The data come from the RNA Mapping Database (RMDB), library OK2TST. An RNA of 177 nucleotides, treated with DMS and 2A3 and read out base by base. For DMS the reverse transcriptase was MarathonRT. The 2A3 profile rests on 1,267 reads. Conditions: 150 mM KOAc, 10 mM MgCl2 and 150 mM bicine (pH 8.5), 24 C.

[RMDB]
RNA sequence: GGGAACGACUCGAGUAGAGUCGAAAACGGCGAGGUGCCCUUAUCGGGAUCCGGCCACUAGUUUCUUGCACCCCUGAUCUCAAUUGCCGAGCGUUAUCCGCAUUCCGCGUUGGCGGCGGCGCGCGCCUCGCCGCUAUUCAUUCGUGAAUAGCGGCGAAAAAGAAACAACAACAACAAC
Reactivity to DMS in 0.01 (KOAc 150mM, MgCl2 10mM, bicine 150mM(pH8.5), 24C), signal-to-noise 3, nucleotides 027 to 126: c080g010g020c030g000a030g020g020u000g000c000c040c090u000u000a060u000c180g000g000g010a030u000c020c090g000g010c070c070a110c160u010a060g010u000u010u000c040u010u000g010c100a170c050c070c020c020u000g000a040u000c010u010c020a080a090u000u000g030c050c010g000a100g000c020g000u000u010a060u010c100c000g010c050a100u000u000c110c070g010c050g020u000u000g000g020c030g020g000c100g010g010c040g040c140g010c030g000c030c020
Reactivity to 2A3 in 0.01 (KOAc 150mM, MgCl2 10mM, bicine 150mM(pH8.5), 24C), signal-to-noise 2, nucleotides 027 to 126: c010g010g000c000g030a070g020g050u100g030c040c030c000u060u170a200u220c060g030g010g020a020u010c010c020g110g000c010c010a040c020u040a040g100u000u070u090c090u070u110g020c050a130c010c000c000c000u000g070a040u020c040u040c010a070a180u070u110g010c000c000g030a020g050c030g060u030u080a070u130c060c010g010c040a020u200u120c050c100g000c040g080u060u060g090g000c000g030g000c000g030g010c030g000c000g020c000g030c040c000